[RMDB]
RNA sequence: GGGAACGACUCGAGUAGAGUCGAAAACUACAUAAAUUCGUUUAUGUAGCAUCGCGGACGCGCAGACUCCCCGUCAGACGGCUCUAGCCUUCCAAGCUCUGCACUCAACAGCUUUCGAGCUGUUGAACAACUAAGGUGUCUUCGGACACCUUAGUUGAAAAGAAACAACAACAACAAC
Reactivity to DMS in 0.01 (KOAc 150mM, MgCl2 10mM, bicine 150mM(pH8.5), 24C), signal-to-noise 4, nucleotides 027 to 126: c000u010a010c000a000u000a000a010a030u000u000c170g020u000u000u000a000u000g000u000a000g010c100a090u010c080g020c110g010g010a050c140g010c060g020c050a050g010a070c050u000c020c010c030c060g010u000c110a060g010a110c080g010g010c020u010c120u000a120g010c010c010u010u000c030c090a070a100g010c070u000c030u000g000c100a130c200u010c010a010a000c000a000g000c000u000u000u020c150g010a020g010c000u000g010u000u000g010a020a160
Reactivity to 2A3 in 0.01 (KOAc 150mM, MgCl2 10mM, bicine 150mM(pH8.5), 24C), signal-to-noise 3, nucleotides 027 to 126: c010u030a010c000a000u030a010a020a030u070u080c120g060u030u010u010a000u000g000u010a000g010c020a080u100c050g030c010g040g040a060c060g030c000g000c120a010g020a110c030u030c030c020c020c010g060u030c030a020g010a080c040g020g010c020u080c090u160a060g010c000c000u040u030c020c000a030a000g000c020u010c010u050g040c010a020c050u030c000a010a000c010a000g000c020u050u060u220c200g080a000g000c010u000g000u000u000g000a000a000